RNA sequence: GGGAACGACUCGAGUAGAGUCGAAAACGCUAUAGAUUCGUCUAUAGCGACUCCUACCCGCCGGGCGGUGCGCGCGGUAGGUGACGCAAACCACCGUGCGAAAUGUACUGGUUUUCGAACCAGUAAAGUAGAUACAGAACUUCGGUUCUGUAUCUACAAAAGAAACAACAACAACAAC
Reactivity to 2A3 in 0.01 (KOAc 150mM, MgCl2 10mM, bicine 150mM(pH8.5), 24C), signal-to-noise 3, nucleotides 027 to 126: c000g000c000u000a000u000a010g000a020u020u060c160g040u000c110u000a010u010a010g010c000g000a000c010u000c000c000u020a060c000c010c010g020c020c070g160g080g040c050g050g020u110g070c010g000c010g000c010g010g040u050a190g060g030u020g070a080c120g010c200a060a090a030c000c000a000c000c010g010u020g010c040g050a070a040a020u150g000u010a020c010u000g020g000u020u000u020u090c180g050a010a010c010c000a000g000u010a000a020a000
Reactivity to DMS in 0.01 (KOAc 150mM, MgCl2 10mM, bicine 150mM(pH8.5), 24C), signal-to-noise 3, nucleotides 027 to 126: c020g020c010u000a010u000a000g010a060u000u000c150g010u000c000u020a010u010a010g020c000g010a050c130u000c010c000u000a120c090c030c010g030c030c090g030g020g010c030g020g000u000g000c090g040c040g010c020g010g000u000a070g010g000u020g010a130c140g020c270a060a150a040c030c010a080c000c000g010u000g000c010g010a030a050a060u010g000u000a000c000u000g000g010u000u000u000u000c130g010a010a010c000c000a010g000u010a010a030a130